[RMDB]
The record gives the reactivity of an RNA of 177 nucleotides to DMS and 2A3. Values cover nucleotides 27 to 126. Conditions: 150 mM KOAc, 10 mM MgCl2 and 150 mM bicine (pH 8.5), 24 C. For 2A3, 1,310 sequencing reads were counted.

RNA sequence: GGGAACGACUCGAGUAGAGUCGAAAAUUGCCCUUUACGACGUGGCGCCCAUCACUCCUGGUGUGGCUGCCGACCUGAGCCACCUGCCCACGAAUUCCAAGGUGACUGGGCACACAGGGGACGGGGCGUAUCACCUCCACUUCGGUGGAGGUGAUACAAAAGAAACAACAACAACAAC
Reactivity to DMS in 0.01 (KOAc 150mM, MgCl2 10mM, bicine 150mM(pH8.5), 24C), signal-to-noise 2, nucleotides 027 to 126: u010u000g000c000c010c000u000u000u000a120c100g030a210c150g040u010g020g030c090g000c000c000c010a160u010c040a160c010u010c020c090u020g000g030u000g000u000g000g000c020u020g020c080c090g000a090c110c050u000g000a090g000c040c060a030c030c250u000g000c030c000c030a040c040g010a140a120u020u010c110c140a050a060g000g000u000g010a130c300u000g020g030g000c000a050c230a060c030a060g000g000g030g000a080c300g010g000g010g070c040
Reactivity to 2A3 in 0.01 (KOAc 150mM, MgCl2 10mM, bicine 150mM(pH8.5), 24C), signal-to-noise 1, nucleotides 027 to 126: u090u120g060c010c000c020u010u110u060a100c090g040a020c070g010u070g020g020c010g000c020c000c000a020u060c010a010c000u010c030c060u000g020g000u140g020u020g050g020c000u070g120c040c030g000a000c010c010u060g070a020g030c000c000a030c020c010u050g080c000c000c000a040c010g070a050a100u140u010c020c020a060a040g080g010u060g010a020c070u010g000g010g030c000a000c020a000c000a040g130g020g000g000a020c100g010g030g000g000c000